An RNA of 207 nucleotides, treated with 2A3 and DMS and read out base by base. The RNA was probed in 150 mM KOAc, 10 mM MgCl2 and 150 mM bicine (pH 8.5) at 24 C. Reactivities are given for positions 27 through 156.
RNA sequence: GGGAACGACUCGAGUAGAGUCGAAAAGGGGUCGUUACUUGGAUUUAGCCUUGACAUGCUCUGUACUGAAGCCUCCACGGUACCGAGCAACAGCAAGGCUUGUCAGUAACGACGGAGGCACCCAAAAGUGACACUGAAGUUCGCUUCAGUGUCACAACAUUUCAAAGCAGUUCGCUGCUUUGAAAUGAAAAGAAACAACAACAACAAC
Reactivity to 2A3 in 0.01 (KOAc 150mM, MgCl2 10mM, bicine 150mM(pH8.5), 24C), signal-to-noise 2, nucleotides 027 to 156: g100g020g050g010u000c010g020u010u000a020c050u120u230g110g020a100u270u240u240a030g000c010c000u020u010g060a130c010a070u070g010c010u010c000u010g010u010a000c000u030g000a100a010g030c000c020u020c030c000a020c000g010g000u010a000c010c030g010a000g010c000a020a030c040a030g050c010a010a000g020g000c010u000u020g010u000c010a000g000u000a000a000c000g000a010c010g010g010a000g000g000c000a030c000c020c010a040a140a010a020g010u000g000a000c010a000c000u000g010a010a010g000u080u170c170g090c120u000u000c000a000g000u010g000u010c000a000c000a000a000
Reactivity to DMS in 0.01 (KOAc 150mM, MgCl2 10mM, bicine 150mM(pH8.5), 24C), signal-to-noise 2, nucleotides 027 to 156: g020g000g050g060u000c040g020u000u010a000c010u010u000g030g010a130u010u000u020a040g050c020c010u000u010g000a120c060a300u000g030c000u000c010u000g020u000a010c010u000g010a060a140g010c020c020u000c010c050a300c040g010g010u000a030c010c100g000a030g000c020a040a020c060a130g010c000a030a020g000g000c000u000u000g010u020c050a040g030u020a030a010c000g000a020c040g050g020a050g060g040c020a170c000c000c010a050a050a130a140g020u010g010a010c020a010c010u000g030a020a030g000u000u000c300g030c000u000u010c000a000g000u000g020u000c010a000c010a030a200